[RMDB]
RNA sequence: GGGAACGACUCGAGUAGAGUCGAAAAAACUAGAAAAGGAUUUGACUCUCACAACGUUGAUACCAUACUGGAGGUUUUAACCAGGCAAGAAAAAGAAAUAAUGAGGGCCGGGUGCGGUGGCUCAGGCGAUACUGUUAGGGUUCGCCCUAACAGUAUCAAAAGAAACAACAACAACAAC
Reactivity to 2A3 in 0.01 (KOAc 150mM, MgCl2 10mM, bicine 150mM(pH8.5), 24C), signal-to-noise 3, nucleotides 027 to 126: a000a030c070u060a060g110a000a140a000a010g040g010a050u020u040u030g010a040c000u060c000u010c060a010c010a050a110c130g030u020u030g020a060u050a150c000c010a010u050a100c030u010g050g000a040g070g010u060u010u010u040a050a050c020c030a040g040g020c090a120a040g140a070a030a030a000a000g140a040a150a030u190a020a060u070g020a070g010g010g000c000c000g060g070g040u150g060c020g000g050u040g060g000c000u000c010a000g020g040c030
Reactivity to DMS in 0.01 (KOAc 150mM, MgCl2 10mM, bicine 150mM(pH8.5), 24C), signal-to-noise 3, nucleotides 027 to 126: a060a080c060u010a060g000a080a120a110a060g000g000a160u000u000u000g000a060c030u000c000u000c070a090c060a060a160c100g000u010u000g000a090u030a040c040c000a070u010a060c040u000g010g010a060g000g000u010u020u000u010a030a100c070c030a020g000g010c100a110a060g000a070a070a060a060a060g000a050a070a060u010a080a060u030g000a120g010g010g000c020c040g000g020g010u000g000c030g010g010u000g000g000c040u010c020a010g000g010c170